[RMDB]
RNA sequence: GGGAACGACUCGAGUAGAGUCGAAAAAAAAAGAUAUGGAUGAGCGGGAGAGACAUUGUGGCCGAGCGAGAUCGGAAACGAUCUCGUAUCCAUUAUGUCUCGAGGAUCGCUCAUCCUAAGUCAAAAAUCGUUAUUAUUACUUCGGUAAUAAUAACGAAAAAGAAACAACAACAACAAC
Reactivity to 2A3 in 0.01 (KOAc 150mM, MgCl2 10mM, bicine 150mM(pH8.5), 24C), signal-to-noise 1, nucleotides 027 to 126: a020a000a000a000a010g080a040u120a030u140g000g000a000u000g000a000g050c020g000g020g000a010g010a000g000a000c010a000u030u020g020u020g000g050c100c110g040a080g030c000g000a020g010a010u000c000g020g000a070a040a050c010g000a000u000c000u000c020g010u000a010u000c000c000a000u040u040a000u030g000u000c000u000c020g000a060g000g000a000u000c000g000c000u010c000a000u000c000c000u000a020a000g030u010c030a000a020a030a090a180
Reactivity to DMS in 0.01 (KOAc 150mM, MgCl2 10mM, bicine 150mM(pH8.5), 24C), signal-to-noise 4, nucleotides 027 to 126: a040a060a080a090a060g000a030u000a300u000g000g000a020u000g010a010g010c000g000g010g000a030g000a030g010a020c010a010u000u000g010u010g000g030c300c150g020a160g010c000g000a010g000a010u000c010g000g000a120a090a120c010g000a010u000c000u000c000g020u000a030u000c000c000a010u000u010a010u000g000u000c000u000c000g000a050g010g010a040u010c010g000c000u000c000a010u000c000c000u000a000a060g000u020c040a040a110a080a100a070

About this RNA
The data come from the RNA Mapping Database (RMDB), library TTRDES. Structure probing data (2A3 and DMS) for a 177-nucleotide construct. 2A3 adducts were read by reverse transcription with SuperScript II with manganese. DMS adducts were read by reverse transcription with MarathonRT. The 2A3 profile rests on 6,426 reads.